Chemical mapping of a 177-nucleotide RNA with 2A3 and DMS.
2A3 adducts were read by reverse transcription with SuperScript II with manganese.
For DMS the reverse transcriptase was MarathonRT.
Conditions: 150 mM KOAc, 10 mM MgCl2 and 150 mM bicine (pH 8.5), 24 C.
Source: RMDB library OK1LIB, as collected in RNAgym.
RNA sequence: GGGAACGACUCGAGUAGAGUCGAAAAAAGUUAUCAAUGCUCGAUUCAAGAAUUGAUAUGUAAAUAAAUGUUCGACAAACUCUAACAUGUUAUAUUGCUCCUUUGACUAGGGUCACUACAGUCAGUGAAGCGUAACGACAUUCGUGUCGUUACGCUUAAAAGAAACAACAACAACAAC
Reactivity to 2A3 in 0.01 (KOAc 150mM, MgCl2 10mM, bicine 150mM(pH8.5), 24C), signal-to-noise 3, nucleotides 027 to 126: a000a010g170u030u010a010u010c000a010a000u040g130c110u100c060g240a220u300u180c070a060a020g040a070a000u000u000g000a000u010a050u090g060u270a020a020a020u020a020a070a050u080g030u050u060c010g010a020c110a150a190a120c110u000c020u010a000a000c030a060u070g010u130u000a080u030a000u040u090g020c080u020c000c000u040u070u140g010a030c020u040a180g020g040g120u090c020a030c030u100a080c020a030g020u010c010a030g020u040g060
Reactivity to DMS in 0.01 (KOAc 150mM, MgCl2 10mM, bicine 150mM(pH8.5), 24C), signal-to-noise 1, nucleotides 027 to 126: a030a070g000u000u000a020u000c000a000a090u000g000c140u000c140g020a300u140u010c080a040a060g000a160a000u010u000g000a020u000a020u020g010u000a000a050a170u050a000a030a000u000g000u000u000c020g030a020c140a050a010a080c230u000c000u020a030a030c190a020u010g010u000u010a010u000a060u000u010g060c010u010c000c050u000u040u000g010a000c030u000a090g000g000g000u050c100a100c150u000a060c030a090g000u000c060a020g000u020g000